[RMDB]
RNA sequence: GGGAACGACUCGAGUAGAGUCGAAAACACAUAGCCGUGCUGUGCGACGGCAACCGGCGAUGGGCGCGCAGCGCGGGCUACGACGACGUCAGCUACGGCUACCGGAUGGGUGCGGCCAAGAUCGCCGACUCCAGACAGAUUUCGAUCUGUCUGGAGUAAAAGAAACAACAACAACAAC
Reactivity to 2A3 in 0.01 (KOAc 150mM, MgCl2 10mM, bicine 150mM(pH8.5), 24C), signal-to-noise 2, nucleotides 027 to 126: c040a010c020a050u130a040g010c000c000g050u010g020c010u050g000u050g040c020g110a040c040g110g060c050a010a050c080c030g040g040c040g010a040u060g060g070g070c030g000c010g000c040a000g030c030g000c030g070g000g000c010u060a030c010g050a010c020g040a000c030g060u090c110a020g000c020u070a070c080g030g000c020u030a070c010c030g060g060a100u110g100g010g040u100g020c010g030g020c030c020a040a020g100a050u070c000g010c030c000g010
Reactivity to DMS in 0.01 (KOAc 150mM, MgCl2 10mM, bicine 150mM(pH8.5), 24C), signal-to-noise 3, nucleotides 027 to 126: c050a140c140a130u020a050g010c000c000g020u000g010c010u000g030u000g000c010g000a060c030g010g000c070a040a040c140c040g000g010c020g000a040u000g000g010g020c000g000c010g000c010a010g010c000g000c020g000g000g000c030u010a020c080g010a150c120g000a100c040g030u000c090a080g010c030u010a050c060g000g010c020u000a090c070c020g000g010a110u000g000g000g010u010g010c060g000g000c050c030a090a140g000a070u000c050g000c010c010g010

Conditions: 150 mM KOAc, 10 mM MgCl2 and 150 mM bicine (pH 8.5), 24 C.
An RNA of 177 nucleotides, treated with 2A3 and DMS and read out base by base.
For 2A3, 2,754 sequencing reads were counted.
It was measured as part of the RMDB library OK2TRN.
DMS adducts were read by reverse transcription with MarathonRT.